Source: RMDB library OK2TST, as collected in RNAgym. This 177-nucleotide RNA was probed chemically with DMS and 2A3. The reactions ran in a buffer of 150 mM KOAc, 10 mM MgCl2 and 150 mM bicine (pH 8.5), at 24 C. Reactivities are given for positions 27 through 126. DMS adducts were read by reverse transcription with MarathonRT.
[RMDB]
RNA sequence: GGGAACGACUCGAGUAGAGUCGAAAAGGAGGCAGUAUGGAGGUAUUGAGAGAGGAGAUGCGGGAGGCAGGAACUACAGCCACUGGGUUCACCCUACCACAGGGCCGCUUCUUUGUCGAGGGGGUGACAGGAAUUCUACUUUCGAGUAGAAUUCCUGAAAAGAAACAACAACAACAAC
Reactivity to DMS in 0.01 (KOAc 150mM, MgCl2 10mM, bicine 150mM(pH8.5), 24C), signal-to-noise 2, nucleotides 027 to 126: g020g010a070g010g010c050a070g020u000a080u000g000g000a090g020g000u010a090u000u010g010a130g000a080g010a130g000g000a080g020a060u000g020c100g000g000g000a100g000g010c070a060g000g010a050a060c080u010a080c120a070g020c030c010a030c070u000g010g010g000u010u000c080a100c050c040c020u000a060c050c070a050c110a030g010g010g000c060c030g010c060u000u000c030u020u010u000g010u000c080g000a120g000g020g000g000g000u010g020a170
Reactivity to 2A3 in 0.01 (KOAc 150mM, MgCl2 10mM, bicine 150mM(pH8.5), 24C), signal-to-noise 1, nucleotides 027 to 126: g060g010a030g030g000c070a000g030u160a090u140g060g020a040g000g060u090a140u120u210g050a080g000a030g000a020g100g030a050g010a040u050g050c050g020g030g020a030g000g000c020a010g050g020a030a020c030u170a080c100a040g020c020c020a070c000u000g030g000g000u080u060c020a080c000c000c030u010a030c030c000a020c030a020g000g000g060c000c000g000c020u160u050c040u050u110u130g020u050c050g040a080g000g010g000g000g000u000g020a020